[RMDB]
RNA sequence: GGGAACGACUCGAGUAGAGUCGAAAAGAAAACGUCAGGCUCGCUGACCGAGCGAAAAGAAAAGCACAGCAUACCUGUGGUAUGGAAAAGAAAAGGGACACUUCCUGUCCGGAAGCAAAGAAAGAAAGGGUAUCUUAGUGUUCGCACUAAGAUACCCAAAAGAAACAACAACAACAAC
Reactivity to DMS in 0.01 (KOAc 150mM, MgCl2 10mM, bicine 150mM(pH8.5), 24C), signal-to-noise 1, nucleotides 027 to 126: g010a110a100a090a050c200g020u000c000a020g020g000c060u000c020g010c130u000g000a020c150c000g000a030g030c060g000a060a010a030a100g000a000a070a090a150g000c030a090c140a060g000c000a050u000a010c040c010u040g000u020g010g010u030a050u000g000g000a000a020a010a300g000a010a040a090a020g000g000g000a060c020a240c300u010u000c020c000u000g000u040c050c030g000g000a050a040g030c140a030a080a070g000a030a110a070g000a100a070a100